Notes: The record gives the reactivity of an RNA of 177 nucleotides to DMS. High DMS reactivity at an A or C suggests that its Watson-Crick edge is free. The RNA was probed in 150 mM KOAc, 10 mM MgCl2 and 150 mM bicine (pH 8.5) at 24 C. Values are in units of 0.01, from 0 to 300, in steps of 10.
RNA sequence: GGGAACGACUCGAGUAGAGUCGAAAAUUGACAUGUUAGCUGUCAAAACAGGCGUUGCUAUUGAACAGCUGCUUUAUGCGAUCCAACAACUGUAUACUGGGUUCCAGGGAAAGCAAAUCCUUGGCAGGUCGCUAUCUAAGUUCGCUUAGAUAGCGACAAAAGAAACAACAACAACAAC
Reactivity to DMS in 0.01 (KOAc 150mM, MgCl2 10mM, bicine 150mM(pH8.5), 24C), signal-to-noise 1, nucleotides 027 to 126: u000u000g000a070c030a000u000g030u050u000a070g020c120u000g000u000c000a000a010a060a130c180a090g040g000c170g030u010u000g000c110u000a120u020u000g000a120a040c010a100g020c000u000g000c100u000u010u000a050u010g010c020g000a060u000c060c010a030a100c080a030a100c100u000g000u000a030u000a150c120u020g000g000g000u030u000c060c010a070g040g010g000a020a030a090g000c250a040a120a120u000c000c030u000u000g070g000c280a040g000